[RMDB]
RNA sequence: GGGAACGACUCGAGUAGAGUCGAAAACAAACAAUUUUAAAACAACAAUGGCAAACAUUAACGAACAAAUCAACAACCAACGCGACGCCGCGGCCAGCGGGAGAAACAAUCUCGUUAGCCAAUUGGCCGCUAGAGCGAUAUUCGUAUCGCUCUAGCGAAAAGAAACAACAACAACAAC
Reactivity to DMS in 0.01 (KOAc 150mM, MgCl2 10mM, bicine 150mM(pH8.5), 24C), signal-to-noise 1, nucleotides 027 to 126: c110a110a060a190c070a050a010u000u030u180u030a080a070a220a000c150a160a170c050a110a070u060g020g000c120a000a110a000c040a000u000u000a040a160c110g110a000a020c180a020a100a060u100c220a080a000c260a000a090c010c000a040a070c130g080c000g000a050c070g020c000c000g050c230g000g000c000c120a090g000c000g000g170g000a000g020a080a080a170c300a110a020u000c000u000c000g160u000u000a040g040c020c000a240a070u000u000g000g030c060
Reactivity to 2A3 in 0.01 (KOAc 150mM, MgCl2 10mM, bicine 150mM(pH8.5), 24C), signal-to-noise 4, nucleotides 027 to 126: c040a000a060a020c080a020a050u210u220u240u300a200a100a020a010c150a090a000c060a080a130u140g020g030c040a100a130a080c050a110u080u100a070a000c060g080a110a050c100a080a040a020u090c030a000a080c010a020a100c000c060a020a120c000g010c060g140a060c050g010c010c000g040c050g000g030c000c010a000g010c000g030g010g020a020g050a000a180a020c030a030a090u010c000u000c040g030u000u000a020g010c000c040a030a080u090u270g050g010c000
The record gives the reactivity of an RNA of 177 nucleotides to DMS and 2A3.
For 2A3, 1,603 sequencing reads were counted.
For 2A3 the reverse transcriptase was SuperScript II with manganese.
DMS adducts were read by reverse transcription with MarathonRT.
The reactions ran in a buffer of 150 mM KOAc, 10 mM MgCl2 and 150 mM bicine (pH 8.5), at 24 C.